[RMDB]
RNA sequence: GGGAACGACUCGAGUAGAGUCGAAAAAAUGCCGCCUCAGUUCCAAGCUCUUUCGUGGCACUGUAAACAGUCCUAUUGAGUUAGUGGCAGUCAACCACGUUGCGAAGCUAAAUUAUCUGGUCGAGAGUUACGAUUCCCUACUUCGGUAGGGAAUCAAUAGCAUUCUACGAUUCGUCGUAGAAUGCUAAAAAGAAACAACAACAACAAC
Reactivity to DMS in 0.01 (KOAc 150mM, MgCl2 10mM, bicine 150mM(pH8.5), 24C), signal-to-noise 1, nucleotides 027 to 156: a080a030u000g000c000c050g010c010c020u030c030a130g000u000u000c040c070a170a300g000c060u010c000u000u000u000c030g040u000g000g000c020a040c040u010g010u000a050a030a110c120a170g010u000c000c050u010a130u010u000g040a170g070u010u000a070g000u000g010g050c040a040g030u010c040a070a110c030c000a040c040g000u000u000g000c070g030a160a180g020c070u000a050a000a070u010u010a080u000c050u000g000g050u000c000g000a060g000a140g020u000u000a080c050g020a040u000u000c010c010c020u000a020c000u000u020c280g120g070u000a010g010g040g000a000a000u000c000a020a090
Reactivity to 2A3 in 0.01 (KOAc 150mM, MgCl2 10mM, bicine 150mM(pH8.5), 24C), signal-to-noise 2, nucleotides 027 to 156: a000a000u050g000c010c020g020c010c010u110c020a100g040u090u060c040c000a070a040g020c000u010c000u020u050u040c020g010u030g000g010c080a000c020u000g040u130a120a100a030c030a020g080u020c050c030u060a120u010u150g130a200g170u060u070a030g010u120g100g000c010a000g030u040c030a030a020c000c020a010c070g030u030u020g040c100g090a090a020g010c000u090a080a120a070u190u130a100u060c110u040g040g010u020c010g040a000g000a000g150u070u100a050c060g000a000u010u000c000c000c000u000a000c000u010u010c130g060g000u000a000g000g000g030a000a000u000c000a020a000
Source information: This 207-nucleotide RNA was probed chemically with DMS and 2A3. Reactivities are given for positions 27 through 156. It was measured as part of the RMDB library M2RFPK. 2A3 adducts were read by reverse transcription with SuperScript II with manganese. For DMS, 2,121 sequencing reads were counted. Conditions: 150 mM KOAc, 10 mM MgCl2 and 150 mM bicine (pH 8.5), 24 C. Values are in units of 0.01, from 0 to 300, in steps of 10.